[RMDB]
RNA sequence: GGGAACGACUCGAGUAGAGUCGAAAACACAAGGGGAUUCAGUUUCAACAUGAAUAUUGAAAGUAAAUAGAGGGAAAACAUGUCCAACAAGUGGAUUCUGAGGCAUUUUUAAAGUCUAGAGGUCAAGAAACUGAAAAGGGAUGAUCAAAGGAGGUUGAUAGAGCAUACAUUUCGAUGUAUGCUCUAUAAAAGAAACAACAACAACAAC
Reactivity to 2A3 in 0.01 (KOAc 150mM, MgCl2 10mM, bicine 150mM(pH8.5), 24C), signal-to-noise 2, nucleotides 027 to 156: c060a000c030a070a030g030g000g000g000a020u030u000c010a010g020u050u030u030c110a120a090c090a130u120g110a190a050u120a130u190u100g020a090a040a030g010u160a040a090a110u110a060g030a020g000g020g030a000a030a000a030c040a010u090g030u040c020c010a030a040c040a220a060g080u030g200g030a040u150u000c020u120g020a040g010g000c010a010u040u020u030u040u250a060a050a010g000u000c000u010a040g010a000g080g000u030c030a000a000g000a040a060a060c070u090g020a020a000a000a130g010g010g020a000u040g020a040u120c090a060a000a070g030g000a010g000g030u050u060g030
Reactivity to DMS in 0.01 (KOAc 150mM, MgCl2 10mM, bicine 150mM(pH8.5), 24C), signal-to-noise 2, nucleotides 027 to 156: c090a120c040a060a020g000g010g020g040a130u010u010c040a090g020u000u000u010c020a040a090c090a090u000g000a080a090u010a140u010u020g010a100a100a070g010u010a050a050a090u000a120g030a090g000g030g010a070a040a020a090c040a060u010g000u000c010c030a030a090c060a070a150g040u000g000g000a070u000u010c050u000g010a060g040g010c020a060u000u010u000u000u010a040a040a070g020u010c090u010a120g000a110g030g010u020c060a000a070g010a020a050a060c030u000g020a050a020a060a060g000g000g020a030u010g010a130u000c040a030a050a100g000g030a050g040g030u010u000g010